[RMDB]
RNA sequence: GGGAACGACUCGAGUAGAGUCGAAAAUAGUGCGAUUAAACUUAUAGUGGGCAAGGCUAAGCUAAUCGAUAAUUGUUCAUCACUUGCACAAUUCAUUUUUGAUGUCGUAGAUUUCGGGUAAGCUAAGCAUGCACGAUGGAUUCGUCCAUCGUGCAUGAAAAGAAACAACAACAACAAC
Reactivity to 2A3 in 0.01 (KOAc 150mM, MgCl2 10mM, bicine 150mM(pH8.5), 24C), signal-to-noise 2, nucleotides 027 to 126: u060a000g150u070g060c000g020a070u060u080a060a070a020c040u040u090a090u080a160g040u050g000g060g000c050a010a010g060g000c050u070a030a000g000c010u020a070a000u070c030g030a040u080a190a090u130u060g040u070u020c030a030u030c030a050c050u030u080g000c030a010c040a110a150u130u140c020a080u020u060u010u050u210g060a080u090g060u060c000g000u040a040g020a160u030u060u030c010g000g000g070u100a070a010g000c040u010a000a010g050
Reactivity to DMS in 0.01 (KOAc 150mM, MgCl2 10mM, bicine 150mM(pH8.5), 24C), signal-to-noise 3, nucleotides 027 to 126: u000a070g010u010g020c050g030a060u000u010a040a100a120c050u020u000a090u010a080g000u000g020g010g040c100a040a050g030g020c070u000a050a020g010c080u000a040a070u020c060g010a110u010a050a060u000u010g010u010u000c020a040u000c170a080c120u000u010g000c120a060c050a050a060u000u020c080a060u000u000u020u000u030g010a040u010g020u000c060g000u000a050g010a100u000u000u000c060g030g010g000u020a040a090g020c050u000a050a100g010
An RNA of 177 nucleotides, treated with 2A3 and DMS and read out base by base. The DMS profile rests on 2,126 reads. DMS adducts were read by reverse transcription with MarathonRT.